[RMDB]
RNA sequence: GGGAACGACUCGAGUAGAGUCGAAAAAGAGCCUUACGAGGCUCAAAGCCGACAGGAGUAAUUCCCGCCGAAACAGGGUUUUCACCCUUCCUUUCUUCGGGUGUCCUUCCUCGCGCCCGCAGGACAAAUGGAGGAGGACAUUCGUGUCCUCCUCCAUAAAAGAAACAACAACAACAAC
Reactivity to DMS in 0.01 (KOAc 150mM, MgCl2 10mM, bicine 150mM(pH8.5), 24C), signal-to-noise 1, nucleotides 027 to 126: a080g110a020g000c000c000u020u030a160c170g020a100g000g010c060u000c000a000a010a130g000c110c000g000a120c190a080g000g000a180g000u020a040a030u000u000c000c000c020g040c160c140g000a030a000a030c130a030g000g000g000u000u000u000u070c250a030c000c010c000u000u020c020c000u000u000u000c040u000u000c020g010g000g000u000g000u000c030c090u000u000c050c040u000c040g000c050g000c010c000c000g030c080a020g000g000a140c230a080a010
Reactivity to 2A3 in 0.01 (KOAc 150mM, MgCl2 10mM, bicine 150mM(pH8.5), 24C), signal-to-noise 2, nucleotides 027 to 126: a000g000a010g000c000c000u030u020a060c210g030a020g010g000c000u000c000a050a000a000g080c050c010g030a030c020a060g040g020a030g040u150a050a000u090u040c010c010c000g030c000c030g070a090a070a060c190a100g030g000g000u060u060u180u200c120a120c000c000c000u000u020c000c010u020u110u010c000u020u010c000g010g000g010u020g000u070c010c010u000u030c000c020u020c010g020c000g000c000c020c020g040c070a050g040g030a080c030a010a130